[RMDB]
RNA sequence: GGGAACGACUCGAGUAGAGUCGAAAACGGAUCAACUUCGGUUGAUCCGAAAGGGACGGGUCGGGAGGGGCAUACUCGCGGUCCCAAGAAGAAUCCAGACUGAAAGGAAGGUCUUCGGACCUUCCAAGAAUAUCCUCAGGUUCGCCUGAGGAUAUUCAAAAGAAACAACAACAACAAC
Reactivity to 2A3 in 0.01 (KOAc 150mM, MgCl2 10mM, bicine 150mM(pH8.5), 24C), signal-to-noise 2, nucleotides 027 to 126: c010g010g000a000u010c000a000a000c000u050u060c150g110g010u000u000g000a000u000c000c000g000a000a010a000g030g000g210a050c100g010g000g120u220c110g060g040g120a120g060g000g040g020c010a010u040a050c010u020c020g030c010g050g000u010c000c010c010a000a030g110a030a010g040a010a040u060c060c040a040g080a150c070u120g090a140a070a070g020g000a010a000g000g010u000c000u000u070c160g000g010a000c000c010u000u000c000c000a000a000
Reactivity to DMS in 0.01 (KOAc 150mM, MgCl2 10mM, bicine 150mM(pH8.5), 24C), signal-to-noise 2, nucleotides 027 to 126: c050g040g000a000u010c000a040a010c000u000u000c200g030g030u010u010g000a020u000c010c000g010a010a040a080g010g020g000a060c180g010g000g010u010c130g020g030g010a110g010g020g000g020c090a060u010a040c020u000c010g000c050g040g000u000c020c010c010a050a060g000a070a140g030a120a110u000c040c050a110g010a080c120u000g010a040a120a150g010g000a030a000g000g010u000c000u000u010c240g010g000a000c000c000u000u020c000c000a020a020
This 177-nucleotide RNA was probed chemically with 2A3 and DMS. For 2A3, 3,377 sequencing reads were counted. High 2A3 reactivity points to a flexible backbone, as in loops and unpaired stretches. The RNA was probed in 150 mM KOAc, 10 mM MgCl2 and 150 mM bicine (pH 8.5) at 24 C.